[RMDB]
RNA sequence: GGGAACGACUCGAGUAGAGUCGAAAACACCUAACGUUCGCGUUAGGUGAAAGAUGCAAGUAAACCUGGAUCGACGCAUCAAGAAGAACCAGGAGAAAUAAAAAACGACAGGGUUCGCCCUGUCGAAGGAUGCUAGAUAGUUCGCUAUCUAGCAUCCAAAAGAAACAACAACAACAAC
Reactivity to 2A3 in 0.01 (KOAc 150mM, MgCl2 10mM, bicine 150mM(pH8.5), 24C), signal-to-noise 2, nucleotides 027 to 126: c000a000c000c000u010a000a000c000g010u030u030c290g000c000g100u000u000a000g000g000u000g000a000a000a000g080a010u090g010c030a030a140g080u220a120a100a130c000c000u010g010g000a100u070c050g030a040c060g000c050a070u090c110a100a090g080a030a000g020a030a030c000c000a010g010g050a040g070a020a120a020u100a050a110a000a020a020a040c000g010a000c000a000g000g030g040u060u050c090g110c010c030c000u000g000u000c000g000a000a010
Reactivity to DMS in 0.01 (KOAc 150mM, MgCl2 10mM, bicine 150mM(pH8.5), 24C), signal-to-noise 1, nucleotides 027 to 126: c020a020c000c000u000a010a000c000g000u000u010c210g060c000g000u000u010a020g000g000u000g000a020a100a110g010a080u000g020c110a040a110g000u010a040a110a080c000c000u030g000g000a060u020c050g000a230c090g000c160a040u030c110a060a050g020a090a230g000a060a060c010c000a010g000g000a190g000a090a120a080u020a000a030a040a090a060a190c000g000a000c010a000g000g000g000u010u020c120g000c000c000c000u020g020u000c000g010a010a070

An RNA of 177 nucleotides, treated with 2A3 and DMS and read out base by base. Reactivities are given for positions 27 through 126. Conditions: 150 mM KOAc, 10 mM MgCl2 and 150 mM bicine (pH 8.5), 24 C. DMS adducts were read by reverse transcription with MarathonRT.